[RMDB]
RNA sequence: GGGAACGACUCGAGUAGAGUCGAAAAAGCCAUCAAGGACGCGCUGUGGCGCAUGGAUGACAGCAAGCUGAGCAUAGAGCAGCUGUCGGCUCUCAGCCGAGCCGUGCCCGAGGACUCCGAGCGCAAACCUGUACGAUAAAUUCGUUUAUCGUACAGGAAAAGAAACAACAACAACAAC
Reactivity to DMS in 0.01 (KOAc 150mM, MgCl2 10mM, bicine 150mM(pH8.5), 24C), signal-to-noise 8, nucleotides 027 to 126: a100g010c010c010a040u000c070a110a120g010g000a200c140g020c040g020c020u010g020u010g020g010c030g010c040a110u010g000g010a070u010g010a050c010a060g010c080a090a050g020c010u000g010a100g010c150a160u010a100g010a070g010c010a070g010c010u000g010u000c000g000g000c010u000c020u000c100a140g010c120c050g000a030g010c010c000g020u000g010c000c000c010g000a110g000g000a070c040u000c020c030g010a060g010c060g010c090a080a090a140
Reactivity to 2A3 in 0.01 (KOAc 150mM, MgCl2 10mM, bicine 150mM(pH8.5), 24C), signal-to-noise 8, nucleotides 027 to 126: a000g030c040c000a030u060c060a070a120g200g040a090c080g050c010g000c050u100g080u170g300g000c020g000c030a010u090g080g020a030u060g010a020c030a010g010c030a200a060g000c020u050g030a030g070c080a190u160a180g110a020g040c020a000g000c010u010g030u020c000g010g000c000u000c000u010c030a050g050c050c010g000a000g000c010c000g010u010g020c000c010c010g030a060g030g010a040c020u030c070c040g040a040g020c050g000c040a040a040a080